[RMDB]
RNA sequence: GGGAACGACUCGAGUAGAGUCGAAAAAGCCUCCUUACGAGGAGGCAGGGCGCGGGUCGUGGGGGCGCCACAGUCUAUUUGACAGUGGAUUUCCCAAGAUCCGUGAUAGAUCCGCUACGGCGGAUCAUUAUGUAAAAAAGUUCGCUUUUUUACAUAAAAAAGAAACAACAACAACAAC
Reactivity to 2A3 in 0.01 (KOAc 150mM, MgCl2 10mM, bicine 150mM(pH8.5), 24C), signal-to-noise 9, nucleotides 027 to 126: a000g010c010c000u040c010c000u080u040a110c250g080a020g000g000a000g010g000c000a010g040g070g010c010g000c010g000g000g010u010c000g010u020g000g000g000g010g010c050g000c000c000a000c000a000g000u000c010u080a300u200u290u300g010a010c010a020g000u000g000g010a030u030u030u030c000c000c000a000a010g000a010u000c010c000g000u000g000a000u010a010g000a000u000c000c000g000c010u020a040c270g080g000c000g000g000a000u000c000a000
Reactivity to DMS in 0.01 (KOAc 150mM, MgCl2 10mM, bicine 150mM(pH8.5), 24C), signal-to-noise 6, nucleotides 027 to 126: a100g000c000c000u000c000c000u000u010a130c160g010a030g010g000a010g010g020c000a020g010g000g010c010g010c000g000g000g010u000c000g020u000g000g000g000g010g010c140g010c000c000a000c000a040g020u000c000u010a180u030u030u030g010a010c000a060g040u000g000g000a050u000u000u000c000c000c000a050a050g000a000u000c010c000g020u010g000a070u020a080g000a010u000c000c010g000c000u000a090c160g040g010c000g010g010a000u000c000a020
About this RNA:
Structure probing data (2A3 and DMS) for a 177-nucleotide construct. 2A3 adducts were read by reverse transcription with SuperScript II with manganese. Conditions: 150 mM KOAc, 10 mM MgCl2 and 150 mM bicine (pH 8.5), 24 C.